[RMDB]
RNA sequence: GGGAACGACUCGAGUAGAGUCGAAAAUGAGAAUACUUUUAGUACAAGCGAGUACACGCAGUAUACUGCCACUUGUGUGAGAAUACUUUUAGUACAAGCGAGUACACGCAGUAUAGUGCUACUUGUGAUACUACUCUGGGUUCGCCCAGAGUAGUAUAAAAGAAACAACAACAACAAC
Reactivity to 2A3 in 0.01 (KOAc 150mM, MgCl2 10mM, bicine 150mM(pH8.5), 24C), signal-to-noise 6, nucleotides 027 to 126: u220g030a030g100a100a050u150a190c040u050u080u040u140a150g020u100a080c050a110a030g000c050g030a010g010u060a050c110a020c170g000c020a010g060u000a010u010a000c000u000g010c010c020a030c000u020u010g030u020g030u070g140a100g100a110a050u090a080c020u070u090u170u250a060g010u030a020c020a050a000g020c010g040a010g040u120a040c040a010c060g000c010a000g010u000a020u020a020g150u010g000c010u010a010c000u000u000g010u020g020
Reactivity to DMS in 0.01 (KOAc 150mM, MgCl2 10mM, bicine 150mM(pH8.5), 24C), signal-to-noise 5, nucleotides 027 to 126: u010g000a090g020a160a090u030a020c020u000u000u000u040a050g000u030a060c140a140a220g010c030g000a060g020u010a040c240a110c190g010c070a050g010u020a020u000a010c000u000g000c020c140a060c020u000u000g030u010g000u020g000a080g000a150a130u000a020c040u000u040u020u020a060g020u010a010c040a080a260g020c010g000a060g000u010a050c100a140c300g030c040a030g000u010a010u000a030g030u000g000c020u020a020c000u000u000g010u020g000
This 177-nucleotide RNA was probed chemically with 2A3 and DMS. Source: RMDB library OK1LIB, as collected in RNAgym. The RNA was probed in 150 mM KOAc, 10 mM MgCl2 and 150 mM bicine (pH 8.5) at 24 C. Values cover nucleotides 27 to 126.